[RMDB]
RNA sequence: GGGAACGACUCGAGUAGAGUCGAAAACUCGGUAGGCUGCAUAUCGCCUGCAGCACGGACGAGACGCGUUCGACGACCUGAGGGAGUGGCGUAGUGGCUUCUAAGGCGGGUUUGGGCCAAACACCCGAUGCAUUACGUCAUUCGUGACGUAAUGCAUAAAAGAAACAACAACAACAAC
Reactivity to 2A3 in 0.01 (KOAc 150mM, MgCl2 10mM, bicine 150mM(pH8.5), 24C), signal-to-noise 2, nucleotides 027 to 126: c010u000c000g050g050u110a070g020g050c030u040g000c050a060u130a070u220c100g060c070c010u000g010c010a010g040c020a090c060g100g100a020c040g000a010g040a030c090g050c030g160u030u060c020g030a070c060g020a060c040c020u070g030a080g020g050g000a070g030u050g040g040c020g040u020a000g070u050g080g030c000u080u020c030u110a070a050g070g000c050g020g010g000u030u080u150g050g000g010c000c000a000a070a030c030a020c020c000c010g020
Reactivity to DMS in 0.01 (KOAc 150mM, MgCl2 10mM, bicine 150mM(pH8.5), 24C), signal-to-noise 3, nucleotides 027 to 126: c020u000c010g040g000u000a150g020g000c000u000g010c040a040u010a130u010c140g000c090c070u000g000c040a000g010c020a160c050g010g000a140c020g020a110g010a090c130g000c060g020u000u000c020g000a100c050g010a090c070c010u010g010a130g010g010g000a070g010u010g000g000c020g010u020a080g000u010g000g010c060u010u010c050u010a080a080g010g030c030g010g000g000u000u000u010g020g020g020c020c050a060a070a090c140a160c010c000c030g000